The record gives the reactivity of an RNA of 177 nucleotides to DMS and 2A3. The reactions ran in a buffer of 150 mM KOAc, 10 mM MgCl2 and 150 mM bicine (pH 8.5), at 24 C. For DMS, 24,921 sequencing reads were counted. For DMS the reverse transcriptase was MarathonRT. In probing experiments dimethyl sulfate is read out at A N1 and C N3, which are open when not base-paired.

RNA sequence: GGGAACGACUCGAGUAGAGUCGAAAACGGCGGUCCUUGGACUAACAGCCCCAAAAACGGCCAGUAGUUUUCUUGGCUGAUUGGCUGUUGGCAUGGGGGCGUCUCGUAGCUGGGAGGUCCGGAGCGGCGAUAAAUAUUUUUUCGAAAAUAUUUAUCGAAAAGAAACAACAACAACAAC
Reactivity to DMS in 0.01 (KOAc 150mM, MgCl2 10mM, bicine 150mM(pH8.5), 24C), signal-to-noise 6, nucleotides 027 to 126: c050g010g000c030g000g000u000c010c010u030u010g010g010a090c010u010a070a100c110a130g000c000c000c190c100a050a080a060a050a070c020g020g000c000c000a010g000u010a040g010u020u020u040u030c120u030u030g010g000c000u000g000a060u010u000g000g000c000u010g010u000u010g000g010c130a120u030g010g000g010g010g010c040g000u000c010u000c050g020u010a060g000c090u030g000g000g010a050g000g000u010c030c020g010g000a060g020c020g010g000
Reactivity to 2A3 in 0.01 (KOAc 150mM, MgCl2 10mM, bicine 150mM(pH8.5), 24C), signal-to-noise 6, nucleotides 027 to 126: c020g030g000c000g000g070u020c010c000u040u110g090g020a050c000u010a040a000c020a020g000c000c000c010c010a010a070a000a000a010c010g000g010c000c010a000g010u040a010g010u030u030u120u110c080u120u150g020g000c000u030g070a100u020u060g000g010c000u000g000u010u000g010g010c060a100u070g030g000g000g010g010c000g010u000c000u000c010g020u020a010g010c030u030g020g010g020a030g000g030u000c010c010g000g010a020g020c010g040g000